[RMDB]
RNA sequence: GGGAACGACUCGAGUAGAGUCGAAAAGAUCGCCUGACGCCAGAUGCCGACGACACGGUGCUGGUGAAGUGGCGCUACAGCGCGUUUCAUCGUUCUCCGCUGGAGCAAAUGCUGAAAGAGAGUGGACGCAUCUGAAUGAGUUCGCUCAUUCAGAUGCAAAAGAAACAACAACAACAAC
Reactivity to DMS in 0.01 (KOAc 150mM, MgCl2 10mM, bicine 150mM(pH8.5), 24C), signal-to-noise 3, nucleotides 027 to 126: g020a090u020c080g010c010c000u000g000a300c050g000c000c020a010g010a100u010g000c000c000g000a130c160g000a100c210a160c000g000g000u000g010c010u010g010g000u000g000a020a140g000u000g010g020c040g010c030u000a070c020a040g000c030g010c080g000u000u000u020c150a080u010c060g000u000u000c010u010c010c020g020c020u000g010g000a040g020c030a070a060a110u020g020c050u010g000a070a080a100g000a120g020a080g000u000g010g010a140c110
Reactivity to 2A3 in 0.01 (KOAc 150mM, MgCl2 10mM, bicine 150mM(pH8.5), 24C), signal-to-noise 2, nucleotides 027 to 126: g050a070u130c020g010c020c030u020g030a040c020g000c010c020a050g090a240u050g040c000c000g070a140c100g040a040c100a030c130g000g000u020g000c010u010g000g000u010g010a040a010g070u080g020g000c020g000c030u060a020c020a030g000c010g010c020g060u050u080u090c050a070u060c010g030u070u040c020u010c000c000g000c060u010g010g030a030g010c020a040a130a170u270g030c040u050g040a020a070a010g120a020g020a020g030u090g000g010a030c070

An RNA of 177 nucleotides, treated with DMS and 2A3 and read out base by base. For 2A3 the reverse transcriptase was SuperScript II with manganese. In probing experiments dimethyl sulfate is read out at A N1 and C N3, which are open when not base-paired.